[RMDB]
RNA sequence: GGGAACGACUCGAGUAGAGUCGAAAAGAUAUGGAGUUGUCCACUUUCAGCAACAGCUCGGAAACGAGACAUGCUGGGUGGCAACUCCUAAGUCAAACGAAUGACACUGUUCGCAGUGUCAUUCGAACUUCGCUUAAAGGUUCGCCUUUAAGCGAAGAAAAGAAACAACAACAACAAC
Reactivity to 2A3 in 0.01 (KOAc 150mM, MgCl2 10mM, bicine 150mM(pH8.5), 24C), signal-to-noise 3, nucleotides 027 to 126: g050a000u050a030u170g000g020a010g020u010u040g190u250c040c030a020c030u220u300u300c030a000g000c000a030a150c010a190g070c010u020c010g000g000a030a050a040c010g010a030g020a040c010a030u070g010c000u030g060g100g030u000g000g000c000a000a000c000u000c000c000u000a000a010g010u000c020a010a040a090c030g010a000a000u000g000a010c000a000c030u020g050u040u150c300g030c180a000g010u010g000u010c000a000u020u000c000g000a010a010
Reactivity to DMS in 0.01 (KOAc 150mM, MgCl2 10mM, bicine 150mM(pH8.5), 24C), signal-to-noise 2, nucleotides 027 to 126: g010a020u000a300u010g010g000a030g000u000u000g000u010c000c010a020c010u000u000u010c000a000g030c000a020a120c300a170g000c000u000c000g010g000a090a090a220c010g000a020g000a040c050a090u000g030c000u010g000g010g010u020g010g000c000a000a000c000u000c000c010u000a010a070g000u000c030a070a130a270c040g010a010a000u000g000a020c010a010c010u010g000u000u010c180g010c000a020g010u000g000u000c000a000u000u000c000g000a040a100